Source information:
The data come from the RNA Mapping Database (RMDB), library OK2TST. This 177-nucleotide RNA was probed chemically with DMS and 2A3. 2A3 adducts were read by reverse transcription with SuperScript II with manganese. For DMS, 774 sequencing reads were counted. DMS adducts were read by reverse transcription with MarathonRT. The 2A3 profile rests on 961 reads. Conditions: 150 mM KOAc, 10 mM MgCl2 and 150 mM bicine (pH 8.5), 24 C. Values cover nucleotides 27 to 126.
RNA sequence: GGGAACGACUCGAGUAGAGUCGAAAAGCCGACGGUUCGCCGUCCUGGUGAAUUGCCCUGCGCUUCUGGCUCCAUGCAAGCACCACGUUGGACACCUCUUCGUUUCGUACAGCUUAAAGCGCGUCGACCACCCCGAUGGAUUCGUCCAUCGGGGUGGAAAAGAAACAACAACAACAAC
Reactivity to DMS in 0.01 (KOAc 150mM, MgCl2 10mM, bicine 150mM(pH8.5), 24C), signal-to-noise 1, nucleotides 027 to 126: g010c020c020g000a070c030g010g000u000u000c160g000c010c000g010u010c060c090u000g040g000u000g000a070a080u000u000g010c030c040c010u000g010c050g030c000u000u000c060u010g010g050c040u010c080c080a150u010g000c090a030a120g020c050a040c020c020a000c150g000u020u000g020g010a120c080a120c110c070u010c010u000u000c000g000u000u000u020c060g000u030a110c110a050g000c050u000u000a050a080a120g000c060g000c050g030u000c090g010a210
Reactivity to 2A3 in 0.01 (KOAc 150mM, MgCl2 10mM, bicine 150mM(pH8.5), 24C), signal-to-noise 1, nucleotides 027 to 126: g010c000c000g010a000c000g000g050u030u060c170g030c050c010g000u000c000c100u070g000g000u090g070a100a110u080u180g050c000c000c000u000g020c080g020c050u050u000c040u060g020g040c000u020c020c020a010u120g020c070a030a120g100c030a020c040c000a020c050g090u100u050g000g030a030c010a050c020c040u080c010u070u060c050g040u000u050u090c040g020u040a060c060a130g020c000u060u180a110a060a020g020c000g010c030g100u040c040g020a030